Structure probing data (2A3 and DMS) for a 177-nucleotide construct. Reactivities are given for positions 27 through 126.
[RMDB]
RNA sequence: GGGAACGACUCGAGUAGAGUCGAAAAACGCUAUCAGUACGCUGAUAGCGAACAUGAUGACGCUCCGGAAUCGCUGCACUGCCGUGAUGAAAGAUCAUUUGAACCCUUUGCCGGCUGAUGACCGUAACACUUACCUGUCCUUCGGGACAGGUAAGUGAAAAGAAACAACAACAACAAC
Reactivity to 2A3 in 0.01 (KOAc 150mM, MgCl2 10mM, bicine 150mM(pH8.5), 24C), signal-to-noise 5, nucleotides 027 to 126: a000c020g000c010u000a000u000c000a000g060u030a070c300g010c100u000g010a010u000a000g000c000g000a000a010c010a030u190g040a130u100g020a010c080g000c040u040c010c000g020g080a040a050u050c010g040c060u050g000c040a040c080u090g030c030c020g040u050g030a040u050g050a060a070a050g080a050u050c010a070u020u090u140g080a090a090c010c010c000u090u070u110g040c020c000g030g040c000u090g020a090u100g030a060c030c020g020u050a090a010
Reactivity to DMS in 0.01 (KOAc 150mM, MgCl2 10mM, bicine 150mM(pH8.5), 24C), signal-to-noise 2, nucleotides 027 to 126: a180c010g020c020u000a000u000c000a000g040u010a090c100g020c030u000g000a010u000a000g000c000g000a020a010c140a170u000g020a080u000g000a080c030g000c000u000c020c040g030g020a080a050u060c030g000c050u010g030c000a080c070u010g030c010c030g000u020g000a000u020g000a110a070a180g020a080u020c010a130u010u020u020g000a060a120c010c020c020u000u000u000g010c010c000g000g000c040u000g010a070u040g010a170c010c120g030u000a090a110
Source: RMDB libraries RFM100 and RFMREP, as collected in RNAgym.
Conditions: 150 mM KOAc, 10 mM MgCl2 and 150 mM bicine (pH 8.5), 24 C.